Background
This 177-nucleotide RNA was probed chemically with DMS and 2A3. The 2A3 profile rests on 1,939 reads. Conditions: 150 mM KOAc, 10 mM MgCl2 and 150 mM bicine (pH 8.5), 24 C. Values cover nucleotides 27 to 126. It was measured as part of the RMDB library RFMREP.

RNA sequence: GGGAACGACUCGAGUAGAGUCGAAAAUUCCAUGGCCGUAAGCGCAGGCACACCACAGUGCCUGCUAUCACGGCAUUAUCGCCAGCGGUGCUGCCGUGAUGCGGUCUUCGCAAGGACCGCAACAUGACCUUUCAAUCUGGUUCGCCAGAUUGAAAGGAAAAGAAACAACAACAACAAC
Reactivity to DMS in 0.01 (KOAc 150mM, MgCl2 10mM, bicine 150mM(pH8.5), 24C), signal-to-noise 2, nucleotides 027 to 126: u010u000c010c020a140u010g000g000c000c020g040u000a040a090g020c170g000c000a000g000g010c000a000c010a080c240c300a140c280a070g000u000g020c000c020u020g020c000u000a000u000c050a000c000g000g020c000a040u000u000a010u000c020g020c020c120a210g020c040g040g030u000g010c160u000g000c000c000g020u000g040a050u000g010c000g000g010u000c010u000u000c170g010c300a240a110g000g000a000c020c000g020c000a060a080c100a070u000g000a110
Reactivity to 2A3 in 0.01 (KOAc 150mM, MgCl2 10mM, bicine 150mM(pH8.5), 24C), signal-to-noise 1, nucleotides 027 to 126: u040u000c000c000a050u050g140g020c020c030g030u070a090a120g080c000g000c060a000g020g000c000a000c010a020c040c050a080c030a100g000u010g000c000c000u000g000c000u000a000u000c010a000c000g000g010c000a000u010u010a000u020c000g030c010c080a130g170c010g040g010u040g010c000u040g000c000c000g000u000g020a040u050g000c020g030g000u010c030u030u070c030g030c100a040a060g000g010a000c000c000g020c010a010a000c040a110u070g080a100